[RMDB]
RNA sequence: GGGAACGACUCGAGUAGAGUCGAAAAGUCCAUCGUGAGAUGGACAAGAGUGUCGUACGCGACACUCAAGCGGAGCACUUCGGUGCUCCGCAGAACUCGUUCGCGAGUUCAAGCUGGAUCUUCGGAUCCAGCAAGGUCUUGCGUUCGCGCAAGACCAAGCACCUAUCGUGAGAUAGGUGCAGUGUGCCGCUACGGCGGCACACACGGUUUUCCUAAAUCGUCGUGAGACGGACCUUGGAAAACCUAGUAUUUAAAUAACUAGGUCUACAAUCGCGUUCGCGCGAUUGAAAAGAAACAACAACAACAAC
Reactivity to 2A3 in 0.01 (KOAc 150mM, MgCl2 10mM, bicine 150mM(pH8.5), 24C), signal-to-noise 2, nucleotides 027 to 266: g000u000c010c000a010u000c000g020u080g090a190g000a020u000g000g000a000c000a010a020g000a000g000u010g000u010c020g000u040a040c300g040c010g090a000c000a000c000u000c000a000a000g010c000g010g020a010g020c000a020c040u140u140c300g140g000u010g000c000u000c000c010g010c000a010g000a000a000c010u000c000g020u100u050c150g010c020g150a010g000u000u000c010a020a010g000c000u000g000g000a000u000c010u010u160c290g120g000a000u000c000c000a000g000c010a000a080g000g000u000c000u010u010g010c000g060u050u040c300g010c000g000c110a000a010g000a010c010c010a010a010g000c000a000c000c000u000a000u000c000g020u020g020a040g000a010u000a000g020g000u010g000c010a000g000u000g000u000g020c000c020g020c030u040a050c290g160g000c000g000g020c000a000c010a000c000a000c000g020g000u010u000u000u010c000c000u010a010a010a010u060c010g010u000c000g020u040g160a150g000a040c010g000g000a000c000c000u010u020g000g010a010a000a000a000c000c000u000a030g020u000a090u100u190u100a170a200a100u070a090a020c140u120a030g010g000u000c010u020a010
Structure probing data (2A3) for a 307-nucleotide construct. The data come from the RNA Mapping Database (RMDB), library POS240. For 2A3, 3,533 sequencing reads were counted. The reactions ran in a buffer of 150 mM KOAc, 10 mM MgCl2 and 150 mM bicine (pH 8.5), at 24 C.